[RMDB]
An RNA of 177 nucleotides, treated with DMS and 2A3 and read out base by base. The DMS profile rests on 4,519 reads. The reactions ran in a buffer of 150 mM KOAc, 10 mM MgCl2 and 150 mM bicine (pH 8.5), at 24 C.

RNA sequence: GGGAACGACUCGAGUAGAGUCGAAAAUUGAUCUUCAUUGGCCGGUUGAUCAACUGGCUGUCACGGAGGCGUUGGGACGUUUGAGUUGGCCUUCGAGCGCGCCUUCACGCUGGCCUCCAGCUUGGCGCCACAAUCAUAGCUUCGGCUAUGAUUGUGGAAAAGAAACAACAACAACAAC
Reactivity to DMS in 0.01 (KOAc 150mM, MgCl2 10mM, bicine 150mM(pH8.5), 24C), signal-to-noise 2, nucleotides 027 to 126: u010u010g010a020u000c000u000u000c030a050u000u010g010g000c010c010g010g000u000u000g010a040u000c050a030a060c050u000g010g000c040u000g020u000c070a110c110g000g000a130g000g020c010g030u010u010g030g010g010a140c030g000u000u000u000g000a070g000u000u010g010g000c020c020u040u010c030g000a040g010c050g020c050g000c000c010u000u000c090a160c090g030c130u000g000g010c040c010u000c030c010a030g000c150u000u000g010g020c200g000
Reactivity to 2A3 in 0.01 (KOAc 150mM, MgCl2 10mM, bicine 150mM(pH8.5), 24C), signal-to-noise 1, nucleotides 027 to 126: u030u020g030a020u000c020u070u020c050a020u070u140g060g000c010c020g050g040u000u030g040a060u000c020a000a140c020u010g080g000c030u030g000u000c010a050c120g010g020a010g010g020c060g090u200u220g060g120g060a090c040g010u060u020u050g080a060g040u030u050g050g010c030c000u030u050c000g010a010g000c060g000c050g030c050c000u000u060c060a080c130g000c120u000g030g020c040c040u030c000c000a030g020c040u100u060g060g110c070g000